[RMDB]
RNA sequence: GGGAACGACUCGAGUAGAGUCGAAAACUGCUGCCGAUAGUGUCAAGUUGCCGCUUGCAGCCGAUUGGGCCGGACGUGUUAUUGUUGUGAAAAACACGUCCGCUAAUUCAAUGGACCUAUUUCCGGGCACCGAUGACAGCAUUAAUGCGCUUUUAGCCGCAAAAAGGGAAUUCGUUCCCUUUUUGCGAAAAGAAACAACAACAACAAC
Reactivity to 2A3 in 0.01 (KOAc 150mM, MgCl2 10mM, bicine 150mM(pH8.5), 24C), signal-to-noise 1, nucleotides 027 to 156: c050u040g020c010u000g010c000c000g090a100u070a120g100u110g130u170c040a020a070g050u100u050g170c030c060g040c070u000u050g000c020a010g000c000c010g150a190u090u110g050g000g020c060c010g010g010a000c000g020u020g010u020u050a060u050u060g130u080u030g000u020g080a160a030a010a000a010c000a000c010g010u000c000c000g000c000u020a010a030u050u060c030a020a120u090g010g010a030c000c000u040a100u070u050u030c000c030g000g000g000c070a090c070c010g020a050u060g060a030c010a010g000c010a010u030u170a170a080u140g040c050g000c000u040u060u020u170a010g000c010
Reactivity to DMS in 0.01 (KOAc 150mM, MgCl2 10mM, bicine 150mM(pH8.5), 24C), signal-to-noise 1, nucleotides 027 to 156: c080u010g010c030u000g010c000c030g000a170u010a050g020u000g040u000c020a090a160g020u010u010g010c050c090g020c090u010u000g040c030a060g030c000c030g010a170u010u020g020g020g070c100c020g000g010a030c000g040u000g020u000u000a150u000u000g010u000u020g020u010g010a060a090a110a060a000c020a030c030g010u010c000c000g050c010u010a020a090u000u000c040a080a130u020g010g010a070c090c000u010a180u000u000u010c060c030g010g010g030c020a060c020c030g020a140u020g000a060c020a060g020c000a110u000u000a050a150u000g000c010g030c050u010u000u000u000a130g010c080